[RMDB]
Structure probing data (2A3 and DMS) for a 177-nucleotide construct.
Source: RMDB library RFM100, as collected in RNAgym.
DMS adducts were read by reverse transcription with MarathonRT.
The DMS profile rests on 1,584 reads.
RNA sequence: GGGAACGACUCGAGUAGAGUCGAAAAUAUUAAUGUAGAUAAGGGAAGUCGGCAAAACCGAUCUGUAACUUCGGGAUAAGGAUUGGCUCUAAAGGUUGGUAGAGUGGACAUUGUAGAGCCUAGAUCAAGGCAAAGGGUAUUUCGAUACCCUUUGCCUAAAAGAAACAACAACAACAAC
Reactivity to 2A3 in 0.01 (KOAc 150mM, MgCl2 10mM, bicine 150mM(pH8.5), 24C), signal-to-noise 1, nucleotides 027 to 126: u130a030u070u300a010a000u210g030u040a000g120a150u000a040a000g010g000g030a000a000g000u000c000g000g000c030a030a120a040a040c000c010g000a000u000c000u000g080u040a020a040c000u000u000c200g000g000g080a060u110a110a000g110g000a070u170u200g070g000c000u000c040u120a040a090a090g040g000u020u020g060g100u100a100g030a040g010u080g000g000a000c000a000u000u110g170u000a140g000a000g010c000c000u000a090g000a000u060c000a000
Reactivity to DMS in 0.01 (KOAc 150mM, MgCl2 10mM, bicine 150mM(pH8.5), 24C), signal-to-noise 2, nucleotides 027 to 126: u060a030u010u020a020a100u050g010u000a080g010a160u100a020a050g020g000g060a110a100g000u010c040g000g040c120a090a020a200a300c000c000g000a040u000c020u010g010u010a230a120c080u000u010c200g000g000g000a060u000a130a090g000g000a080u000u030g070g000c060u010c030u000a050a100a100g000g000u000u010g020g020u000a080g010a060g010u020g030g000a020c060a080u000u010g040u000a000g000a040g000c000c000u030a040g000a110u000c060a040